The record gives the reactivity of an RNA of 177 nucleotides to 2A3 and DMS. It was measured as part of the RMDB library OK2TRN. Conditions: 150 mM KOAc, 10 mM MgCl2 and 150 mM bicine (pH 8.5), 24 C. For 2A3 the reverse transcriptase was SuperScript II with manganese.

RNA sequence: GGGAACGACUCGAGUAGAGUCGAAAAGGUGGUUUUUUGCUGUUCAGUUAAGCUAAUGGUAUUGUGCUUGUAAUCAAUUGCUUUGAGCUCUAACAGCUGGCGGUGUUGGGGCGAAUUGAACAACACAAAAAGAAUGAGGUUUCGACCUCAUUCUUUUAAAAGAAACAACAACAACAAC
Reactivity to 2A3 in 0.01 (KOAc 150mM, MgCl2 10mM, bicine 150mM(pH8.5), 24C), signal-to-noise 2, nucleotides 027 to 126: g040g060u020g010g000u010u050u010u030u100u160g020c010u000g040u040u040c030a040g010u050u070a060a030g000c020u060a030a050u100g090g000u090a050u160u130g040u040g070c090u100u090g090u130a090a080u090c050a030a080u040u040g000c040u060u070u190g050a040g000c000u000c000u010a020a000c020a050g080c040u050g030g100c110g000g040u020g010u010u020g000g020g000g000c030g030a020a020u030u020g000a020a000c000a010a020c030a010c020a040
Reactivity to DMS in 0.01 (KOAc 150mM, MgCl2 10mM, bicine 150mM(pH8.5), 24C), signal-to-noise 4, nucleotides 027 to 126: g010g020u000g010g010u000u010u000u000u000u000g020c030u000g020u000u000c080a080g010u010u000a050a070g010c040u010a060a070u000g010g020u000a080u000u010g020u000g000c140u000u010g020u000a060a100u010c030a060a050u000u000g020c060u000u000u010g000a190g000c010u010c030u000a030a020c040a030g010c030u000g000g020c130g010g020u000g000u000u000g010g010g010g020c010g010a040a030u000u000g010a040a060c050a010a030c050a050c230a050